[RMDB]
RNA sequence: GGGAACGACUCGAGUAGAGUCGAAAACUUAAGGUGUUCGCACCUUAAGAAAUAAGAAACGGACGGGUGAGAACCGAGACAUACACCCAAACGCGAAAGCGAAAAUCUGGCCCUUCGGGGCCAGAAACAGACAUACCUAGUUCGCUAGGUAUGUCUGAAAAGAAACAACAACAACAAC
Reactivity to 2A3 in 0.01 (KOAc 150mM, MgCl2 10mM, bicine 150mM(pH8.5), 24C), signal-to-noise 1, nucleotides 027 to 126: c000u020u010a000a000g000g000u020g040u050u080c110g020c040a000c000c000u010u000a000a000g010a000a020a010u130a060a030g140a080a100a000c020g000g070a010c070g040g000g020u040g010a070g070a050a090c040c000g040a050g040a060c040a050u160a010c000a020c010c000c000a030a070a040c020g040c000g060a050a010a030g020c020g020a050a020a000a190u000c000u000g000g000c010c000c020u020u070c250g040g000g000g050c000c000a000g000a000a000a000
Reactivity to DMS in 0.01 (KOAc 150mM, MgCl2 10mM, bicine 150mM(pH8.5), 24C), signal-to-noise 2, nucleotides 027 to 126: c010u020u000a020a020g000g050u000g010u000u020c190g060c020a020c000c000u000u000a010a010g000a100a120a050u000a060a180g000a060a060a150c060g000g030a140c210g000g000g000u010g000a100g000a060a100c010c020g030a210g000a100c110a070u000a130c160a020c000c020c010a090a050a120c090g010c000g000a120a020a110g010c020g000a150a090a120a090u000c000u000g000g000c000c000c010u000u010c260g050g020g000g010c010c000a000g000a000a020a250
Source: RMDB library M2PK50, as collected in RNAgym. The record gives the reactivity of an RNA of 177 nucleotides to 2A3 and DMS. The reactions ran in a buffer of 150 mM KOAc, 10 mM MgCl2 and 150 mM bicine (pH 8.5), at 24 C. For DMS the reverse transcriptase was MarathonRT. Reactivities are given for positions 27 through 126.